[RMDB]
RNA sequence: GGGAACGACUCGAGUAGAGUCGAAAAGUGCUUGAGCACUGUCGUUGCGACGAGAGUUCGAUGCGAUCCGGAAAGCAUUUGCUCUCGAUGUCGAUCCGGAAAGACAUCUUUGUGCUCUUGCACGAAAGGGUCUGCCGUGGUUCGCCAUGGUAGACCCAAAAGAAACAACAACAACAAC
Reactivity to 2A3 in 0.01 (KOAc 150mM, MgCl2 10mM, bicine 150mM(pH8.5), 24C), signal-to-noise 9, nucleotides 027 to 126: g000u000g000c000u010u000g000a000g000c000a010c020u040g030u010c030g090u100u250g120c150g040a020c010g000a010g000a010g070u100u190c100g020a010u020g010c010g040a150u030c010c000g020g050a040a030a010g000c000a010u010u040u170g020c020u010c010u020c020g000a010u010g070u120c010g010a060u020c010c010g020g030a040a020a010g030a030c000a000u010c000u040u060u090g000u000g000c000u000c000u000u000g000c000a000c000g000a030a000a010
Reactivity to DMS in 0.01 (KOAc 150mM, MgCl2 10mM, bicine 150mM(pH8.5), 24C), signal-to-noise 7, nucleotides 027 to 126: g010u000g000c000u010u010g010a020g020c010a030c000u010g020u010c020g000u030u000g010c090g000a030c010g010a040g000a080g000u030u010c230g000a040u000g010c000g010a300u010c010c010g000g000a040a150a300g000c000a010u000u000u040g010c020u010c020u000c030g010a000u010g000u020c030g000a210u010c000c010g000g000a040a180a260g000a150c040a030u010c040u010u020u010g010u000g000c010u000c020u000u000g010c000a010c000g000a050a070a080

The record gives the reactivity of an RNA of 177 nucleotides to 2A3 and DMS. The DMS profile rests on 23,142 reads. The RNA was probed in 150 mM KOAc, 10 mM MgCl2 and 150 mM bicine (pH 8.5) at 24 C.